[RMDB]
RNA sequence: GGGAACGACUCGAGUAGAGUCGAAAAAUUAACCCAGCCUAAAUGAAGAGCAGCACAAAAGGUUCGUCUGCAAACACUCCAUGGUAGACAGAGGAUGGGGAAAUGGAUGUGGACUAUUUGGAAGUAAACUAUACGAGUUCUUCGGAACUCGUAUAGUAAAAGAAACAACAACAACAAC
Reactivity to DMS in 0.01 (KOAc 150mM, MgCl2 10mM, bicine 150mM(pH8.5), 24C), signal-to-noise 3, nucleotides 027 to 126: a090u010u010a090a120c010c010c000a110g000c050c040u010a030a080a050u010g010a070a040g000a110g010c030a030g010c040a050c140a040a060a090a090g010g010u000u010c110g000u010c010u010g010c030a040a030a200c050a040c030u000c020c000a050u000g010g010u010a080g000a080c070a060g000a070g000g000a060u010g020g010g010g000a050a060a090u000g000g010a110u010g000u000g020g000a070c050u000a080u000u000u010g020g020a050a100g020u000a100a080
Reactivity to 2A3 in 0.01 (KOAc 150mM, MgCl2 10mM, bicine 150mM(pH8.5), 24C), signal-to-noise 1, nucleotides 027 to 126: a000u060u060a000a060c010c010c000a030g040c020c020u110a180a130a120u100g060a070a050g000a020g150c000a000g000c000a010c000a090a100a020a020g010g000u080u150c060g000u000c030u000g000c000a020a090a000c000a020c060u010c010c010a020u040g120g040u080a050g040a130c050a050g080a030g140g030a030u060g000g000g000g010a000a130a030u070g000g040a020u050g020u040g010g030a010c040u080a060u080u070u080g020g020a100a060g020u080a010a110